[RMDB]
RNA sequence: GGGAACGACUCGAGUAGAGUCGAAAACAACAUUUUUAUCUCUUCUUGUAACUCUUCAACUUUCUUUAUUGUAUCCUGCAAAGCUCUCAUAGUGUCAAGCAAUAAAGGAGUUGUAUCAAGCUCAAGCCUUUCAACUUUUGGCCCGUUUAGCUCGUGGGGCAGUUACAAUUUUCGAAUUGUAACUGCCAAAAGAAACAACAACAACAAC
Reactivity to 2A3 in 0.01 (KOAc 150mM, MgCl2 10mM, bicine 150mM(pH8.5), 24C), signal-to-noise 3, nucleotides 027 to 156: c010a040a030c010a080u130u150u110u160u170a210u040c040u020c020u110u030c040u070u060g030u080a080a070c030u030c060u120u080c030a040a040c030u030u140u120c020u000u190u100a010u060u020g000u020a090u090c000c040u050g090c070a050a080a180g070c030u040c010u030c070a100u080a120g060u060g020u090c020a000a070g000c010a030a020u010a040a000a000g000g000a000g020u000u000g000u020a050u050c030a020a000g020c010u000c050a050a040g040c000c010u090u090u080c060a130a180c070u030u120u080u110g030g010c020c000c000g070u090u080u060a030g020c000u060c070g120u160g000g080
Chemical mapping of a 207-nucleotide RNA with 2A3. Source: RMDB library OK3TST, as collected in RNAgym. Values are in units of 0.01, from 0 to 300, in steps of 10. For 2A3 the reverse transcriptase was SuperScript II with manganese.